Conditions: 150 mM KOAc, 10 mM MgCl2 and 150 mM bicine (pH 8.5), 24 C.
Chemical mapping of a 177-nucleotide RNA with DMS and 2A3.
For DMS the reverse transcriptase was MarathonRT.
For DMS, 3,333 sequencing reads were counted.
2A3 adducts were read by reverse transcription with SuperScript II with manganese.
Reactivities are given for positions 27 through 126.
As a SHAPE reagent, 2A3 marks flexible, mostly unpaired nucleotides at the ribose 2'-OH.
RNA sequence: GGGAACGACUCGAGUAGAGUCGAAAAAGAAUGUAGAUAAGGGAAGUCGGCAAAAUAGAUCCGUAACUUCGGGAAAAGGAUUGGCUCUGAGGGUUGGGCCUAGGGGUCUUUUUGGAGAACUUGUGGCCAGACACCUAGUGUUCGCACUAGGUGUCUGAAAAGAAACAACAACAACAAC
Reactivity to DMS in 0.01 (KOAc 150mM, MgCl2 10mM, bicine 150mM(pH8.5), 24C), signal-to-noise 2, nucleotides 027 to 126: a040g000a150a020u030g020u000a040g020a090u040a100a090g000g000g010a060a030g010u000c070g010g000c050a040a020a100a170u040a070g010a030u000c010c010g050u030a080a130c050u000u010c040g000g010g000a050a050a100a170g030g000a110u020u010g000g020c000u000c040u000g000a080g000g000g000u000u040g010g000g030c040c010u000a050g020g000g000g010u000c010u000u000u020u000u010g010g000a080g000a040a070c110u030u010g010u020g000g030c100
Reactivity to 2A3 in 0.01 (KOAc 150mM, MgCl2 10mM, bicine 150mM(pH8.5), 24C), signal-to-noise 2, nucleotides 027 to 126: a000g110a030a060u080g000u150a050g050a120u090a200a080g040g030g040a020a010g070u120c030g030g040c030a000a000a210a000u120a050g040a060u030c000c000g050u070a040a030c010u040u030c020g030g000g020a000a070a040a010g040g030a100u040u120g000g010c000u000c030u060g040a160g010g080g000u060u080g040g000g070c000c010u030a040g000g000g010g000u030c000u030u070u000u100u150g080g020a090g000a010a030c020u050u030g040u030g050g040c010